[RMDB]
RNA sequence: GGGAACGACUCGAGUAGAGUCGAAAAACUAGUUAAUGAGUUUCAGACUUAAGUAUGAUGUUGUGUUUGCAUAUAGUUCGGGAAACCGAACUUGAGUAACAAUUUGUUACUCAUUUACUUCCUGUAUCAAAACUUUAAAUUUCGAUUUAAAGUUUUGAAAAGAAACAACAACAACAAC
Reactivity to 2A3 in 0.01 (KOAc 150mM, MgCl2 10mM, bicine 150mM(pH8.5), 24C), signal-to-noise 5, nucleotides 027 to 126: a000c040u040a020g030u020u030a020a010u020g000a010g030u020u060u060c040a050g040a090c060u140u130a200a090g080u160a170u240g120a080u180g080u270u080g110u060g070u080u130u110g020c010a010u030a000u010a300g010u000u000c000g010g000g000a040a060a020c020c000g000a000a000c010u000u020g010a000g000u020a050a020c020a040a130u070u060u100g010u000u010a000c000u000c010a000u010u020u010a010c000u030u020c020c000u050g020u060a050u040
Reactivity to DMS in 0.01 (KOAc 150mM, MgCl2 10mM, bicine 150mM(pH8.5), 24C), signal-to-noise 1, nucleotides 027 to 126: a080c180u020a080g010u010u010a060a050u050g010a030g020u010u000u010c020a120g000a080c060u000u020a070a130g010u010a090u000g000a090u010g000u040u010g020u000g030u010u010u010g000c090a030u030a070u000a010g010u000u000c000g000g000g000a130a100a140c000c000g000a000a010c000u000u000g000a070g000u010a000a000c020a090a170u040u010u000g010u000u000a010c010u000c000a040u020u010u000a080c060u000u000c050c010u000g020u010a130u010

Notes
An RNA of 177 nucleotides, treated with 2A3 and DMS and read out base by base. The data come from the RNA Mapping Database (RMDB), libraries RFM100 and RFMREP. Reactivities are rounded to 0.1 and cut off at 0 and 3. Conditions: 150 mM KOAc, 10 mM MgCl2 and 150 mM bicine (pH 8.5), 24 C.